[RMDB]
RNA sequence: GGGAACGACUCGAGUAGAGUCGAAAACUCGCUCAAACAUACAGAGUUGUUGUGCGAAAUGAAUCUCUCUGCAUUAGAAUGGUCGAAGAAUCAGCGGCAAUUCGAGACCGAAUUAGAAGCCGCAUUAACAGCUUUGGAACACGCCUUGCUGACGUGAAAUAGUCCCUAAUUUCGAUUAGGGACUAUUAAAAGAAACAACAACAACAAC
Reactivity to 2A3 in 0.01 (KOAc 150mM, MgCl2 10mM, bicine 150mM(pH8.5), 24C), signal-to-noise 2, nucleotides 027 to 156: c000u000c020g070c050u180c140a230a200a030c030a060u170a030c020a040g080a000g100u050u030g050u040u020g030u010g040c010g020a010a040a110u120g050a020a080u010c020u020c020u010c060u070g090c030a020u070u150a090g100a110a080u100g010g000u030c020g000a180a010g000a100a000u040c030a080g000c000g000g020c040a010a030u000u000c010g030a030g070a100c000c010g040a070a070u100u050a060g060a180a050g010c000c000g000c030a020u040u130a030a020c000a010g000c080u140u110u090g080g030a060a000c040a010c030g030c000c010u000u080g010c010u010g010a010c040g010u020g030a030
Reactivity to DMS in 0.01 (KOAc 150mM, MgCl2 10mM, bicine 150mM(pH8.5), 24C), signal-to-noise 3, nucleotides 027 to 156: c030u000c030g020c050u010c060a140a070a140c060a200u000a170c050a100g010a090g010u000u000g030u000u000g010u000g030c010g010a090a070a070u000g010a110a090u010c040u010c020u000c020u010g030c050a100u000u000a100g020a090a050u010g020g020u000c000g000a120a190g000a070a040u000c080a140g010c050g020g010c040a090a070u000u010c010g000a300g010a120c010c020g000a060a080u000u010a170g010a080a100g000c060c030g000c030a080u010u000a050a050c040a020g010c010u000u000u000g030g000a090a130c010a030c020g010c000c020u000u010g000c110u000g020a090c020g010u010g000a080
Source: RMDB library OK3TST, as collected in RNAgym. An RNA of 207 nucleotides, treated with 2A3 and DMS and read out base by base. For 2A3, 693 sequencing reads were counted. For 2A3 the reverse transcriptase was SuperScript II with manganese. The RNA was probed in 150 mM KOAc, 10 mM MgCl2 and 150 mM bicine (pH 8.5) at 24 C.